[RMDB]
RNA sequence: GGGAACGACUCGAGUAGAGUCGAAAAGAUAUGGAUUCUUGACAUGCUGUUCGUCGGAAACGACGGUCAGCAGCAACAGCAAGAUCCUAAGUCAAAACGGUUUUAAUCCUUCGGGAUUAAAACCGAACGCAUGCUAUACGUUCGCGUAUAGCAUGCGAAAAGAAACAACAACAACAAC
Reactivity to 2A3 in 0.01 (KOAc 150mM, MgCl2 10mM, bicine 150mM(pH8.5), 24C), signal-to-noise 1, nucleotides 027 to 126: g030a050u030a030u170g000g030a010u230u210c000u030u000g030a080c040a100u100g000c020u000g000u110u110c000g010u000c000g020g030a040a060a090c010g000a000c000g010g020u050c040a000g000c000a000g040c030a030a150c040a140g070c010a010a010g010a000u000c010c000u030a240a020g090u050c020a000a030a070a130c020g000g000u000u020u010u040a000a000u040c020c000u030u070c270g180g000g010a040u000u000a000a000a020a000c000c000g010a000a000
Reactivity to DMS in 0.01 (KOAc 150mM, MgCl2 10mM, bicine 150mM(pH8.5), 24C), signal-to-noise 2, nucleotides 027 to 126: g000a040u000a300u010g010g000a020u000u010c000u020u000g020a050c150a170u000g000c000u000g010u010u000c000g010u000c000g040g000a110a100a140c000g000a000c030g010g000u000c070a030g000c010a010g020c230a060a050c270a140g010c010a010a020g020a010u000c000c000u010a080a130g010u000c070a040a070a130a160c000g000g000u000u010u010u000a000a020u000c010c000u000u050c300g020g000g000a020u000u000a000a000a000a030c010c000g000a000a000